[RMDB]
RNA sequence: GGGAACGACUCGAGUAGAGUCGAAAAGAAAGAAAGAAAGCGGGGGGCCGGAGGGUGGAAGGCAGGGGGGUGUAGGAUGGGUAUCAGGACUUCCACUUCCCGUCCUUCCAUCCCCCGUUCCCCUCAACCACCGUUCACUUUUCGAAGUGAACGGUGGAAAAGAAACAACAACAACAAC
Reactivity to 2A3 in 0.01 (KOAc 150mM, MgCl2 10mM, bicine 150mM(pH8.5), 24C), signal-to-noise 2, nucleotides 027 to 126: g080a000a040a010g090a050a140a000g110a040a080a000g080c090g000g000g000g000g000g000c010c000g010g000a060g000g040g000u000g000g020a000a030g000g010c040a110g000g000g000g000g010g000u020g010u010a050g020g050a070u040g020g010g110u210a150u270c110a060g020g110a020c000u060u010c060c000a020c040u030u010c010c000c000g040u100c040c000u000u020c000c000a000u000c000c000c000c000c000g000u070u080c000c000c000c000u000c000a000a000